[RMDB]
RNA sequence: GGGAACGACUCGAGUAGAGUCGAAAAUUGUGCCGCGCCUGCGCAGAUGACUACGACGGCUGCGUCUUCACAGUCGGCGUAGGUGCCCUUAGAAACCUUCGUGCGUGACGACGCCCACACCACACCGAUCAACGUAUGUCUUCGGACAUACGUUGAUAAAAGAAACAACAACAACAAC
Reactivity to DMS in 0.01 (KOAc 150mM, MgCl2 10mM, bicine 150mM(pH8.5), 24C), signal-to-noise 2, nucleotides 027 to 126: u000u010g020u000g020c080c090g030c040g010c010c030u010g000c060g010c020a070g000a100u010g000a100c000u000a040c010g010a020c010g000g000c030u000g020c040g040u000c170u020u000c070a060c020a060g000u000c010g000g010c000g020u000a000g020g020u000g010c020c020c020u020u020a080g010a040a100a040c150c040u000u000c050g030u010g000c020g030u000g020a100c080g000a060c050g020c000c040c020a040c050a080c080c040a100c140a110c100c090g020
Reactivity to 2A3 in 0.01 (KOAc 150mM, MgCl2 10mM, bicine 150mM(pH8.5), 24C), signal-to-noise 1, nucleotides 027 to 126: u100u060g050u080g070c030c010g040c020g020c000c000u050g000c000g010c010a000g070a180u070g040a050c020u020a000c060g040a000c000g000g020c030u060g040c020g070u060c050u230u170c060a060c000a050g010u000c020g000g000c000g010u000a000g010g000u000g000c000c000c000u040u090a070g050a070a060a030c010c030u070u050c040g110u020g060c020g010u010g080a040c030g010a010c000g030c000c010c000a030c010a000c020c000a030c040a010c040c040g070